[RMDB]
RNA sequence: GGGAACGACUCGAGUAGAGUCGAAAAUGGAUAUGACUUUGAGAGAGAAGGGUACUCUCUGGUUGGAAUAGAUCCUUUCCGCCUGCUUCAAAACAGCCAGGUCUUUAGUCUCAUUAGACCAAAUGAGAAUCCAGCACAUAAGAGUCAAUUAGUGUGGACCUAACACCACUUUCGAGUGGUGUUAGGUAAAAGAAACAACAACAACAAC
Reactivity to 2A3 in 0.01 (KOAc 150mM, MgCl2 10mM, bicine 150mM(pH8.5), 24C), signal-to-noise 2, nucleotides 027 to 156: u110g020g000a060u080a050u160g030a020c020u060u100u050g020a050g000a000g010a010g010a100a090g060g030g000u030a030c000u000c000u000c000u010g010g010u060u160g020g020a040a040u030a080g070a060u060c030c000u000u010u040c020c010g000c020c020u040g000c010u050u130c110a050a060a170a140c030a060g020c060c040a010g010g000u020c010u050u160u130a080g030u030c000u000c030a030u030u050a090g080a130c020c080a050a060a050u020g000a000g000a000a010u090c110c060a010g000c010a010c000a010u030a040a020g000a000g020u020c000a000a000u020u000a000g010u000g020u020g000g040
Reactivity to DMS in 0.01 (KOAc 150mM, MgCl2 10mM, bicine 150mM(pH8.5), 24C), signal-to-noise 1, nucleotides 027 to 156: u010g020g020a050u010a090u000g010a040c030u010u010u000g000a090g020a130g000a060g000a080a050g020g000g010u020a080c010u000c010u000c030u000g000g030u000u010g030g000a090a100u000a090g000a030u010c040c000u000u000u000c010c020g030c050c010u000g000c020u000u000c150a090a110a200a100c230a000g010c030c050a060g040g040u000c030u020u020u010a080g030u010c000u000c010a090u000u000a100g000a110c100c040a090a070a000u010g010a040g000a080a100u010c080c090a090g010c000a040c030a040u010a070a040g010a130g000u000c030a040a060u000u000a030g030u010g000u010g000g010

Structure probing data (2A3 and DMS) for a 207-nucleotide construct.
It was measured as part of the RMDB library OK3TST.
The reactions ran in a buffer of 150 mM KOAc, 10 mM MgCl2 and 150 mM bicine (pH 8.5), at 24 C.
Values cover nucleotides 27 to 156.